An RNA of 207 nucleotides, treated with 2A3 and DMS and read out base by base. The reactions ran in a buffer of 150 mM KOAc, 10 mM MgCl2 and 150 mM bicine (pH 8.5), at 24 C.
RNA sequence: GGGAACGACUCGAGUAGAGUCGAAAACUGUGUCACUGAGAAUUGUUCAAAGUUUCUGUGAAGUUCAUCUGGAAAUGUUCAACAAGUGCUGAUAAGCUGUUUCACUUUUUUGAGGUGUGAGUAGAGGAGGGCCAGGAAUUCUACUCAAGGGAAAUAAAUUCUAUUCGAGAUUCGUCUCGAAUAGAAUAAAAGAAACAACAACAACAAC
Reactivity to 2A3 in 0.01 (KOAc 150mM, MgCl2 10mM, bicine 150mM(pH8.5), 24C), signal-to-noise 3, nucleotides 027 to 156: c030u040g030u030g030u070c040a020c070u060g040a000g050a150a120u120u070g050u110u090c070a110a090a130g010u030u050u040c040u070g070u030g050a060a030g020u080u070c030a060u000c040u040g010g020a050a090a070u070g040u100u120c040a050a050c030a050a120g050u050g070c020u030g030a100u040a140a030g030c020u010g020u030u100u040c030a040c000u120u060u030u070u090u170g080a020g000g020u050g000u030g030a030g020u020a040g010a020g040g010a010g020g020g000c000c010a010g030g030a020a010u060u000c000u020a030c000u000c040a020a030g060g010g020a040a110a020u150a030a150
Reactivity to DMS in 0.01 (KOAc 150mM, MgCl2 10mM, bicine 150mM(pH8.5), 24C), signal-to-noise 2, nucleotides 027 to 156: c020u020g020u020g020u000c020a110c010u000g000a200g010a110a070u000u000g030u010u010c060a080a120a200g030u010u000u010c030u000g010u000g010a050a110g010u000u000c070a050u010c030u000g040g020a050a060a050u000g000u000u010c050a080a070c060a080a090g030u000g000c030u000g020a090u010a050a140g030c010u010g000u020u000u000c030a080c040u000u000u010u000u010u010g000a080g000g030u000g010u000g000a070g000u000a060g010a140g000g000a110g020g030g030c040c050a070g020g010a050a080u000u010c010u000a020c000u000c000a070a070g010g020g000a050a030a020u000a060a090

Background: Reactivities are rounded to 0.1 and cut off at 0 and 3.